[RMDB]
RNA sequence: GGGAACGACUCGAGUAGAGUCGAAAACAACUGUUGGGCGCCUUGUCCACGCACUGCAACGAAUAGACAUCCACGCGCACCGUCUGGGUUGGAAGGGUCCACAGGAAGAUUUGGACACCCAAUCACGAUCCUCUUGAAUGUUCGCAUUCAAGAGGAUAAAAGAAACAACAACAACAAC
Reactivity to DMS in 0.01 (KOAc 150mM, MgCl2 10mM, bicine 150mM(pH8.5), 24C), signal-to-noise 4, nucleotides 027 to 126: c050a060a110c090u000g010u000u020g030g000g020c020g030c050c010u000u010g010u020c030c070a110c120g000c050a050c050u010g000c050a080a150c070g000a110a080u010a100g020a120c060a050u000c060c090a070c120g000c110g040c060a080c060c050g010u000c050u000g010g000g020u000u000g000g000a070a050g000g020g020u000c000c000a000c120a030g020g010a080a100g000a190u000u000u000g020g000a070c110a150c040c000c010a040a090u000c090a080c220g020
Reactivity to 2A3 in 0.01 (KOAc 150mM, MgCl2 10mM, bicine 150mM(pH8.5), 24C), signal-to-noise 3, nucleotides 027 to 126: c000a020a020c000u060g110u200u100g070g020g000c070g260c020c020u030u090g050u000c000c030a010c030g000c010a020c030u070g020c050a090a080c060g090a080a080u060a120g070a050c020a040u040c030c000a070c050g020c030g020c050a070c150c000g050u050c030u080g040g010g050u060u060g050g070a020a020g090g000g000u020c030c020a000c010a010g060g020a070a050g040a080u080u120u080g040g000a020c010a080c020c000c000a010a020u090c050a040c180g040
Structure probing data (DMS and 2A3) for a 177-nucleotide construct. It was measured as part of the RMDB library OK2TST. The RNA was probed in 150 mM KOAc, 10 mM MgCl2 and 150 mM bicine (pH 8.5) at 24 C. Reactivities are rounded to 0.1 and cut off at 0 and 3. For 2A3, 2,974 sequencing reads were counted.